[RMDB]
RNA sequence: GGGAACGACUCGAGUAGAGUCGAAAAACAACGUCCGCUUCACUGGAGAUGACGGAAUUCCGGUCGUCAGCUACCUGACCUGGCCCGAGAACGACUGGAACCUGGACUAUGCCCAGGGGGGCAGCGCUAAUCUAGUAGUGUUCGCACUACUAGAUUAAAAAGAAACAACAACAACAAC
Reactivity to DMS in 0.01 (KOAc 150mM, MgCl2 10mM, bicine 150mM(pH8.5), 24C), signal-to-noise 9, nucleotides 027 to 126: a120c060a080a130c050g000u010c020c060g020c020u000u000c010a060c050u010g010g010a100g000a080u000g000a110c020g000g000a100a300u000u000c010c000g020g010u000c000g010u000c040a180g010c070u000a050c080c030u000g000a080c140c110u000g000g000c010c080c070g010a110g000a140a050c010g010a020c010u000g000g000a030a030c100c010u000g000g000a110c060u010a070u000g000c070c000c000a030g000g010g000g000g000g010c020a070g010c030g000c110
Reactivity to 2A3 in 0.01 (KOAc 150mM, MgCl2 10mM, bicine 150mM(pH8.5), 24C), signal-to-noise 6, nucleotides 027 to 126: a000c030a020a020c020g040u030c030c100g000c010u030u030c020a040c060u040g010g020a140g020a100u050g030a020c020g010g030a030a090u050u000c010c000g010g010u010c010g000u010c020a020g000c040u070a070c020c050u080g130a140c000c030u030g040g000c000c040c030g090a100g030a070a020c010g020a000c000u010g000g010a010a010c000c010u020g010g030a070c040u080a080u270g090c000c000c000a010g000g000g000g000g000g000c010a010g000c050g000c060